[RMDB]
An RNA of 177 nucleotides, treated with DMS and 2A3 and read out base by base. 2A3 is a SHAPE reagent: it acylates the 2'-hydroxyl of flexible nucleotides of all four kinds.

RNA sequence: GGGAACGACUCGAGUAGAGUCGAAAAUCGCGGACGUCGACGGCGAAAUGCAGUUCGAAGUGCUGUCGACCAACGGCGACACGUUCCUCGGCGGCGAGGACUUCGACCAGCGCAUCAUCGAUUACAAGUACGAUCAUUUAUUCGUAAAUGAUCGUACAAAAGAAACAACAACAACAAC
Reactivity to DMS in 0.01 (KOAc 150mM, MgCl2 10mM, bicine 150mM(pH8.5), 24C), signal-to-noise 7, nucleotides 027 to 126: u000c020g030c040g000g010a260c300g010u000c010g010a030c030g000g020c010g010a060a080a080u010g020c100a100g010u000u000c060g000a070a070g010u000g010c020u000g020u000c000g010a030c010c070a050a190c100g010g000c020g010a030c130a120c090g000u000u000c010c010u000c050g010g010c190g010g010c030g010a070g000g000a050c050u000u000c020g000a050c040c030a120g010c070g000c030a060u000c080a070u000c050g000a100u010u010a100c210a080a150
Reactivity to 2A3 in 0.01 (KOAc 150mM, MgCl2 10mM, bicine 150mM(pH8.5), 24C), signal-to-noise 7, nucleotides 027 to 126: u040c000g000c030g040g030a040c030g010u020c010g000a010c020g000g020c040g050a080a040a070u240g020c080a050g100u120u120c060g070a110a010g060u070g080c020u010g000u000c000g030a060c020c000a050a040c030g100g020c010g000a020c020a000c080g040u050u020c010c000u020c010g050g010c030g010g010c000g020a040g020g040a050c000u040u020c030g060a080c010c010a050g020c020g000c030a040u050c000a030u050c040g060a050u060u130a070c040a180a020